[RMDB]
RNA sequence: GGGAACGACUCGAGUAGAGUCGAAAACGCGAUGGAUACGUCCAUCGCGAAUCCGACCAAGCCGCGGGCGUUAAACUGUGGCACGGUUGUGCCUAGGUGCAACCCUGCUACUAAUGGCGGUACCCCUGCCCAAGCUACCGUCUACGGACGGUAGCAAACGAUUACUUUUAUUCGUAAAAGUAAUCGUAAAAGAAACAACAACAACAAC
Reactivity to 2A3 in 0.01 (KOAc 150mM, MgCl2 10mM, bicine 150mM(pH8.5), 24C), signal-to-noise 4, nucleotides 027 to 156: c010g000c000g000a000u000g000g010a000u020a060c240g100u010c000c000a000u000c000g020c000g000a000a000u020c010c000g060a070c020c010a080a040g050c020c020g060c050g030g030g000c050g040u030u090a090a110a070c060u060g010u020g040g040c000a000c020g100g030u030u130g000u030g000c000c020u070a130g130g000u000g000c000a000a030c000c000c010u010g040c010u010a010c010u060a090a180u130g020g000c010g000g030u100a090c010c010c010c040u070g020c000c010c020a030a020g010c000u000a000c000c000g000u000c010u010a040c200g100g000a000c010g010g000u000a000g000c000a000a000
Reactivity to DMS in 0.01 (KOAc 150mM, MgCl2 10mM, bicine 150mM(pH8.5), 24C), signal-to-noise 1, nucleotides 027 to 156: c000g040c000g000a040u010g020g010a070u000a050c300g020u000c000c010a000u000c010g020c020g030a020a090u000c030c000g040a160c010c030a110a270g020c040c030g020c050g020g000g010c050g000u010u000a050a120a090c070u020g000u000g010g060c000a020c110g020g010u020u000g030u010g000c000c030u000a140g080g020u000g010c010a030a010c020c000c010u030g020c000u000a040c020u010a080a100u000g030g020c000g010g020u000a050c000c000c050c060u010g000c010c010c060a080a170g020c000u010a000c020c010g000u000c020u000a080c290g050g000a030c000g000g000u000a000g010c000a000a020
Chemical mapping of a 207-nucleotide RNA with 2A3 and DMS. The reactions ran in a buffer of 150 mM KOAc, 10 mM MgCl2 and 150 mM bicine (pH 8.5), at 24 C. For 2A3 the reverse transcriptase was SuperScript II with manganese. Source: RMDB library OK3TST, as collected in RNAgym.